[RMDB]
RNA sequence: GGGAACGACUCGAGUAGAGUCGAAAAUCACAGACACAAAAGGCUUUGGCUGGACACCACAGAGUGAAGGAAGCAAAACAGAGCUUCAAUUCUUGGUUUUCUCAGAUAGAAGUGUCAGUGUGAGACUUUCUAUUUAAUAGCUAGCAUUUACUGAACACCCCAGUGCUAAUUUCGAUUAGCACUGGGGAAAAGAAACAACAACAACAAC
Reactivity to 2A3 in 0.01 (KOAc 150mM, MgCl2 10mM, bicine 150mM(pH8.5), 24C), signal-to-noise 1, nucleotides 027 to 156: u050c010a010c010a050g100a000c000a020c000a080a110a060a060g100g000c030u090u070u100g060g010c050u050g040g010a000c000a010c010c000a010c090a080g030a000g090u000g010a000a090g200g050a020a020g000c010a060a060a080a110c110a030g060a010g100c000u010u000c000a030a080u050u040c040u000u030g000g040u000u000u090u050c020u000c000a030g000a060u020a020g130a100a020g110u050g030u060c010a020g090u030g030u040g120a040g000a030c010u040u060u020c010u030a050u040u090u120a080a100u080a040g040c040u020a010g020c060a080u060u030u140a020c050u200g050a060a010c010a030
The record gives the reactivity of an RNA of 207 nucleotides to 2A3. It was measured as part of the RMDB library OK3TST. The reactions ran in a buffer of 150 mM KOAc, 10 mM MgCl2 and 150 mM bicine (pH 8.5), at 24 C. The 2A3 profile rests on 597 reads. As a SHAPE reagent, 2A3 marks flexible, mostly unpaired nucleotides at the ribose 2'-OH.